The record gives the reactivity of an RNA of 177 nucleotides to 2A3 and DMS. The RNA was probed in 150 mM KOAc, 10 mM MgCl2 and 150 mM bicine (pH 8.5) at 24 C. It was measured as part of the RMDB libraries RFM100 and RFMREP. Reactivities are rounded to 0.1 and cut off at 0 and 3.
RNA sequence: GGGAACGACUCGAGUAGAGUCGAAAAUAUCCAUGGCAGCCUAUGGAUUCGCACGAGAAGGACAUAAACAGCUCAGUAGUGGCACGCUCACAACCUGGUUAUACAUCAGUUGUGAUUAACCACUUACAUUGACAUAUCCGUUCGCGGAUAUGUCAAUAAAAGAAACAACAACAACAAC
Reactivity to 2A3 in 0.01 (KOAc 150mM, MgCl2 10mM, bicine 150mM(pH8.5), 24C), signal-to-noise 6, nucleotides 027 to 126: u140a010u000c000c000a010u020g040g000c070a050g100c010c050u050a040u050g040g000a030u030u080c050g020c050a050c070g030a030g030a130a010g100g010a010c020a010u180a040a140a020c050a050g060c040u040c060a080g010u070a000g000u010g010g010c120a020c110g020c000u010c000a010c000a010a030c020c070u010g030g010u070u040a160u100a240c100a020u030c010a000g010u000u010g000u010g000a010u010u070a020a050c000c010a010c000u020u080a020c020
Reactivity to DMS in 0.01 (KOAc 150mM, MgCl2 10mM, bicine 150mM(pH8.5), 24C), signal-to-noise 4, nucleotides 027 to 126: u010a060u020c000c000a100u030g000g020c080a080g030c050c020u000a050u000g000g000a070u000u000c070g020c080a080c120g000a080g020a060a050g010g010a060c110a050u010a070a070a080c120a100g000c050u000c080a110g000u010a020g020u000g000g000c100a050c170g000c300u000c000a020c000a010a020c110c060u010g010g000u000u030a100u030a120c160a000u010c030a050g010u010u000g010u000g020a020u000u020a130a220c010c020a020c020u000u020a050c060